Source: RMDB library RFM100, as collected in RNAgym. An RNA of 177 nucleotides, treated with 2A3 and read out base by base.
[RMDB]
RNA sequence: GGGAACGACUCGAGUAGAGUCGAAAACCGGACUAUCUGCGUGAUCCCUGGUGACUUGAUACAGUCGCUGCACACGACUAUUUCAGGAUUGCUCUGGUGUCUUCGCCGGUGGUGUCCCCUUACCGAGCCAUGCCUGGCAUUUCGAUGCCAGGCAUGGAAAAGAAACAACAACAACAAC
Reactivity to 2A3 in 0.01 (KOAc 150mM, MgCl2 10mM, bicine 150mM(pH8.5), 24C), signal-to-noise 3, nucleotides 027 to 126: c000c000g000g000a020c030u040a020u010c000u010g010c010g050u030g050a100u080c000c000c020u000g030g000u020g020a020c010u020u060g020a040u080a060c080a020g000u000c010g000c030u210g000c070a060c000a010c060g050a060c020u050a070u100u030u010c030a050g120g070a300u050u060g000c030u030c100u140g040g000u000g000u040c070u150u060c010g020c010c020g050g000u000g000g010u060g030u040c010c000c000c000u030u040a040c010c110g000a000g050